Chemical mapping of a 177-nucleotide RNA with 2A3 and DMS.
Conditions: 150 mM KOAc, 10 mM MgCl2 and 150 mM bicine (pH 8.5), 24 C.
It was measured as part of the RMDB library OK2TRN.
Values are in units of 0.01, from 0 to 300, in steps of 10.
For DMS, 713 sequencing reads were counted.
[RMDB]
RNA sequence: GGGAACGACUCGAGUAGAGUCGAAAAUACGCGGCCGUAGCUAUAAUCGUAUACGGCGCUACGUACGCGAUCGGCCGUAAUCGCGGCUAAUGCAUUAAUUAUACGCGUAAUGCUAGCUAAUGCUAUAGCCUAGCCAUACGUUCGCGUAUGGCUAGGCAAAAGAAACAACAACAACAAC
Reactivity to 2A3 in 0.01 (KOAc 150mM, MgCl2 10mM, bicine 150mM(pH8.5), 24C), signal-to-noise 2, nucleotides 027 to 126: u120a040c000g000c000g010g030c000c010g020u000a000g000c000u030a080u080a210a080u120c050g040u070a070u020a180c080g060g000c050g070c030u000a030c020g010u000a000c070g010c020g030a050u150c090g040g000c050c010g060u060a040a090u170c090g000c000g090g010c030u030a060a090u070g020c010a010u070u060a010a050u160u040a130u020a190c070g030c020g050u110a090a000u190g010c020u020a020g000c010u040a100a060u080g010c050u080a060u160a230
Reactivity to DMS in 0.01 (KOAc 150mM, MgCl2 10mM, bicine 150mM(pH8.5), 24C), signal-to-noise 1, nucleotides 027 to 126: u010a150c110g000c020g000g000c100c000g040u000a080g000c050u000a160u020a150a120u010c120g000u000a080u000a080c050g030g010c090g030c110u000a010c010g040u000a050c020g000c020g010a060u000c050g020g090c030c030g000u010a090a030u010c100g000c070g000g020c090u010a060a200u000g000c050a020u000u000a080a040u030u010a090u010a010c120g030c100g000u060a070a110u040g000c010u000a050g000c060u000a020a080u010g030c030u000a120u000a140